[RMDB]
RNA sequence: GGGAACGACUCGAGUAGAGUCGAAAAGCAGUGCGUCCUAGUGGCUCUGAGUGAGGGUUCCGUCCCCUCUCAUCCAUUACAAACGCCCUUUGCCAGUUCCGUCUGGUGAAGUGUGUGGAAGUCAAGUAGCAUGUUGGUGUUUCGACACCAACAUGCUAAAAGAAACAACAACAACAAC
Reactivity to 2A3 in 0.01 (KOAc 150mM, MgCl2 10mM, bicine 150mM(pH8.5), 24C), signal-to-noise 2, nucleotides 027 to 126: g090c060a000g060u040g190c000g000u000c000c000u000a000g010u000g000g040c000u000c000u000g000a000g000u070g070a250g040g040g000u260u140c050c080g240u290c010c000c000c000u000c000u010c000a080u090c000c000a000u000u010a000c000a000a040a000c000g010c000c010c000u010u010u000g010c000c000a000g000u180u300c030c090g030u020c000u000g000g000u030g000a010a000g000u000g050u010g010u040g030g070a110a090g100u200c060a100a000g060u010

This 177-nucleotide RNA was probed chemically with 2A3.
The reactions ran in a buffer of 150 mM KOAc, 10 mM MgCl2 and 150 mM bicine (pH 8.5), at 24 C.
It was measured as part of the RMDB library RFM100.